[RMDB]
Structure probing data (2A3 and DMS) for a 177-nucleotide construct. Values are in units of 0.01, from 0 to 300, in steps of 10. The reactions ran in a buffer of 150 mM KOAc, 10 mM MgCl2 and 150 mM bicine (pH 8.5), at 24 C. The data come from the RNA Mapping Database (RMDB), library OK1LIB. Values cover nucleotides 27 to 126.
RNA sequence: GGGAACGACUCGAGUAGAGUCGAAAACUAUGUACAGACAGUACAGUGGAUAAGGUCUGUCGAUAUCCAACUUUAACAAUGGUACUUGCAGUGGUAUCUAUCAAGAUAGGCAGGCUAUCAUAGAAAGAAGAUGUGUUUUAUUCGUAGAACGCAUCUUAAAAGAAACAACAACAACAAC
Reactivity to 2A3 in 0.01 (KOAc 150mM, MgCl2 10mM, bicine 150mM(pH8.5), 24C), signal-to-noise 5, nucleotides 027 to 126: c010u010a030u040g010u010a010c010a060g210a030c030a010g060u010a000c000a020g030u060g090g010a050u020a110a070g020g000u000c000u010g000u000c000g060a020u000a010u030c020c000a040a020c050u070u050u060a100a010c050a040a040u060g020g000u010a010c000u010u070g070c030a060g050u050g070g000u010a010u000c000u010a080u080c060a030a020g000a020u020a010g010g000c010a000g000g000c010u010a020u030c010a010u020a030g090a020a170a000g140
Reactivity to DMS in 0.01 (KOAc 150mM, MgCl2 10mM, bicine 150mM(pH8.5), 24C), signal-to-noise 9, nucleotides 027 to 126: c030u010a050u010g010u010a010c010a120g000a110c180a110g010u000a020c020a090g000u020g010g010a070u010a040a080g000g000u000c020u000g000u000c010g000a110u020a020u010c030c050a070a130c160u020u030u020a080a090c200a070a040u010g000g010u000a020c020u000u010g010c140a100g010u020g000g010u000a010u000c000u000a100u030c200a070a060g010a030u000a030g010g000c010a010g000g000c120u000a010u010c030a060u010a070g000a070a140a110g020